[RMDB]
RNA sequence: GGGAACGACUCGAGUAGAGUCGAAAAUUCGGUUCCGAAUAGUGUAACUGUUGGUGCUGAGGUAAUCCAUCUUUAAAACCAUCGCCGUUAGAGGUUGCUUCUGAUAUUUUCGGUUAAGCGACCCAUGCACUACAACGUUAUUCGUAACGUUGUAGUGAAAAGAAACAACAACAACAAC
Reactivity to DMS in 0.01 (KOAc 150mM, MgCl2 10mM, bicine 150mM(pH8.5), 24C), signal-to-noise 8, nucleotides 027 to 126: u020u010c030g020g010u010u000c040c020g020a060a060u010a060g010u000g010u020a070a090c070u010g020u010u000g010g010u010g010c060u000g010a070g010g010u010a070a090u010c050c030a070u010c050u010u010u000a060a070a100a100c030c020a050u010c060g010c050c040g010u020u020a080g010a120g010g010u000u000g010c000u000u000c010u010g010a040u010a120u010u010u000u000c010g010g010u010u040a010a020g050c010g000a020c010c000c040a110u010g010
Reactivity to 2A3 in 0.01 (KOAc 150mM, MgCl2 10mM, bicine 150mM(pH8.5), 24C), signal-to-noise 9, nucleotides 027 to 126: u040u010c030g020g000u090u050c020c010g030a050a060u060a080g110u110g060u180a120a060c020u040g060u090u060g040g000u040g020c030u030g010a030g030g040u080a050a050u000c020c020a060u020c020u030u160u110a080a130a030a040c030c010a070u080c070g030c080c020g050u020u060a080g060a080g120g000u000u010g010c000u030u040c000u010g040a050u030a210u230u150u070u030c010g000g010u080u190a020a000g010c000g000a010c000c000c010a020u120g020
Description:
This 177-nucleotide RNA was probed chemically with DMS and 2A3. It was measured as part of the RMDB libraries RFM100 and RFMREP. Reactivities are rounded to 0.1 and cut off at 0 and 3.